[RMDB]
RNA sequence: GGGAACGACUCGAGUAGAGUCGAAAACUAGGAGUUGGUGGCGACCGGAGCGAGGAGAAAAGCAAAGAAAGCAACGGGGCUAGCCGACGGGUGUUCCGCCUCCCGAGAGGGGACGAGUGAGGCUUAUAUGCGGCUCUGUUCGCAGAGCCGAAAAGAAACAACAACAACAAC
Reactivity to 2A3 in 0.01 (KOAc 150mM, MgCl2 10mM, bicine 150mM(pH8.5), 24C), signal-to-noise 2, nucleotides 027 to 129: c030u010a020g040g060a070g000u030u000g000g000u040g030g010c000g010a070c000c000g000g040a000g010c050g000a080g000g020a000g070a000a060a010a000g040c100a000a100a000g080a040a100a000g060c040a000a050c050g060g000g080g000c100u080a010g090c000c000g010a030c000g000g020g000u060g030u070u030c000c050g000c000c020u080c040c010c020g050a050g010a020g080g010g000g010a030c030g000a040g010u060g040a030g000g000c050u110u050a140u070a000u140g060
Reactivity to DMS in 0.01 (KOAc 150mM, MgCl2 10mM, bicine 150mM(pH8.5), 24C), signal-to-noise 4, nucleotides 027 to 129: c000u010a120g060g010a170g030u030u030g060g020u000g020g030c120g010a130c060c000g020g030a130g030c110g000a060g020g000a060g050a030a030a080a100g010c140a010a010a020g030a070a060a130g170c060a140a100c000g060g000g020g010c020u020a050g010c060c030g000a030c200g060g020g010u000g030u010u020c010c040g060c040c020u020c020c000c070g040a200g040a140g040g000g020g030a060c060g010a100g020u040g030a100g000g010c070u030u050a090u010a100u090g010